[RMDB]
RNA sequence: GGGAACGACUCGAGUAGAGUCGAAAAUCAGUCAAUGCGUUGCUUGUAAUAGCUGGUAAUGCUUACACAGGAGCUGAUGAGAAUGACUACUUAGAUGAUGGCCGAUUAAAUCCUAAUGGUCGUUUAGUGCAAGUAUGAAUUUCGAUUCAUACUUGCAAAAAGAAACAACAACAACAAC
Reactivity to 2A3 in 0.01 (KOAc 150mM, MgCl2 10mM, bicine 150mM(pH8.5), 24C), signal-to-noise 4, nucleotides 027 to 126: u010c010a000g050u010c010a030a090u090g020c020g040u010u030g010c010u020u030g040u070a120a180u080a300g080c030u030g020g020u030a020a020u010g000c000u040u080a070c130a010c050a100g090g050a050g030c010u010g000a030u030g010a020g040a050a070u070g010a020c000u020a010c020u100u050a040g060a160u140g020a020u050g120g000c020c010g030a030u030u220a090a140a060u040c030c010u020a070a030u050g010g000u010c010g000u050u050u080a110g020
Reactivity to DMS in 0.01 (KOAc 150mM, MgCl2 10mM, bicine 150mM(pH8.5), 24C), signal-to-noise 8, nucleotides 027 to 126: u000c020a040g020u000c060a140a080u000g010c030g020u000u000g010c030u010u000g010u010a130a130u000a090g020c030u010g010g010u000a040a030u010g020c010u000u000a100c170a090c140a080g010g010a130g020c020u000g010a040u010g000a140g000a040a040u000g000a050c030u000a040c170u010u000a050g010a090u000g000a070u000g010g010c080c050g000a090u000u000a080a100a090u000c050c030u000a040a060u000g000g000u000c010g020u010u000u000a090g020
The record gives the reactivity of an RNA of 177 nucleotides to 2A3 and DMS.
The data come from the RNA Mapping Database (RMDB), library OK2TRN.
Values cover nucleotides 27 to 126.
Reactivities are rounded to 0.1 and cut off at 0 and 3.
For 2A3, 5,022 sequencing reads were counted.
The DMS profile rests on 11,946 reads.